[RMDB]
RNA sequence: GGGAACGACUCGAGUAGAGUCGAAAAUUUACGUCCUCUCAGGCAUAGAGAUGACCAUUUGCCUAGGGUGAGUCUUUAAGUAGACACAGCCUAUCUAUGGCGACGUAUAGGGGCACGGGUUUUGCCACCCCCAUGACGGUCGGAGGCUAUUAGCCUUCCUUCUUGAAAUCUUCGGAUUUCAAGAAGGAAAAGAAACAACAACAACAAC
Reactivity to 2A3 in 0.01 (KOAc 150mM, MgCl2 10mM, bicine 150mM(pH8.5), 24C), signal-to-noise 4, nucleotides 027 to 156: u040u030u030a010c020g040u010c010c000u000c000u050c100a020g020g000c000a030u050a030g080a030g030a120u100g000a040c030c020a090u100u100u070g000c000c010u010a020g040g000g010u010g010a050g000u000c000u080u260u060a300a300g270u130a050g070a000c000a000c000a040g040c010c010u060a100u090c060u080a070u140g020g000c010g000a010c010g010u020a030u070a060g010g020g010g000c100a030c170g090g000g040u060u110u220u190g030c000c000a090c010c000c000c000c000a060u150g070a010c050g020g020u050c010g000g010a020g000g000c020u050a110u250u150a130g010c000c000u030u010